Chemical mapping of a 177-nucleotide RNA with 2A3 and DMS.

RNA sequence: GGGAACGACUCGAGUAGAGUCGAAAAGAUAUGGACUUCUCCUGCCAGCGAAGAACUCGGAAACGAGGGAGCUGAUGGAGAGAGUCCUAAGUCACGAUCGUCUGUCAAGUUCGCUUGACAGACGAAACGAUGCGGAUAUGUUCGCAUAUCCGCAUCGAAAAGAAACAACAACAACAAC
Reactivity to 2A3 in 0.01 (KOAc 150mM, MgCl2 10mM, bicine 150mM(pH8.5), 24C), signal-to-noise 1, nucleotides 027 to 126: g050a010u060a100u150g000g020a000c000u000u040c010u040c000c020u090g290c130c000a020g000c000g200a300a010g030a050a070c000u000c000g030g030a140a080a030c010g020a000g000g040g000a030g000c000u030g000a010u010g000g010a080g000a020g010a030g010u040c000c000u030a070a010g080u000c030a010c170g070a150u020c000g010u000c000u020g000u010c000a000a010g000u050u220c300g060c180u000u000g000a010c000a000g000a000c000g000a000a000a000
Reactivity to DMS in 0.01 (KOAc 150mM, MgCl2 10mM, bicine 150mM(pH8.5), 24C), signal-to-noise 1, nucleotides 027 to 126: g000a080u000a300u010g000g020a000c000u000u000c000u000c000c000u010g070c130c000a010g020c010g000a080a230g010a070a160c000u000c000g020g000a080a100a120c000g010a020g000g000g000a120g000c010u000g040a120u000g000g030a030g000a070g020a040g010u000c000c000u020a000a060g000u020c070a140c140g000a140u000c000g020u010c000u000g000u000c000a020a000g000u010u020c210g000c000u000u000g000a030c000a040g000a010c000g000a000a040a040
Annotation
The data come from the RNA Mapping Database (RMDB), library TTRDEL. Conditions: 150 mM KOAc, 10 mM MgCl2 and 150 mM bicine (pH 8.5), 24 C. DMS adducts were read by reverse transcription with MarathonRT.